[RMDB]
RNA sequence: GGGAACGACUCGAGUAGAGUCGAAAACAAAACCUGAAGAGGCACCUAGGAAAAUCAGCAAAGCGAAGCGCAAGUUGACACCACAGGAAACUCAGGAAGCUAAGAAGCAAGCAGACUUGAGAAAAGCUGAAGCGGAAAGAGCGCUACAAGAACAGAAUCAUAUUCCUAAGUUCGCUUAGGAAUAUGAAAAAGAAACAACAACAACAAC
Reactivity to 2A3 in 0.01 (KOAc 150mM, MgCl2 10mM, bicine 150mM(pH8.5), 24C), signal-to-noise 4, nucleotides 027 to 156: c030a020a070a010a040c010c020u060g050a120a050g020a060g090g000c050a030c040c010u050a040g040g060a100a100a020a060u070c020a000g020c000a110a000a060g040c040g110a080a010g020c020g000c090a090a040g020u030u010g040a040c030a030c060c020a030c010a040g050g000a060a060a040c020u020c020a000g030g010a060a000g000c010u060a120a040g030a060a010g120c040a010a030g000c020a020g050a120c020u050u070g020a020g040a060a060a040a000g010c030u030g030a050a010g010c010g020g030a050a070a020g030a030g020c040g000c060u080a030c030a060a020g100a080a000c030a040g250a150a020
Reactivity to DMS in 0.01 (KOAc 150mM, MgCl2 10mM, bicine 150mM(pH8.5), 24C), signal-to-noise 2, nucleotides 027 to 156: c020a070a080a130a090c010c050u010g000a070a130g060a140g010g040c010a010c080c020u000a110g020g000a070a060a110a110u020c060a100g010c020a010a060a060g040c090g050a060a150g030c040g010c050a040a110g020u000u000g020a130c050a110c080c050a080c050a090g030g000a150a090a060c020u020c020a040g000g000a080a160g050c030u010a100a060g010a040a110g040c070a080a060g000c050a040g020a180c030u020u000g010a120g000a080a010a100a120g010c020u000g000a060a070g000c040g030g000a070a070a080g000a090g010c040g010c060u020a020c030a020a070g000a050a140c080a050g000a130a170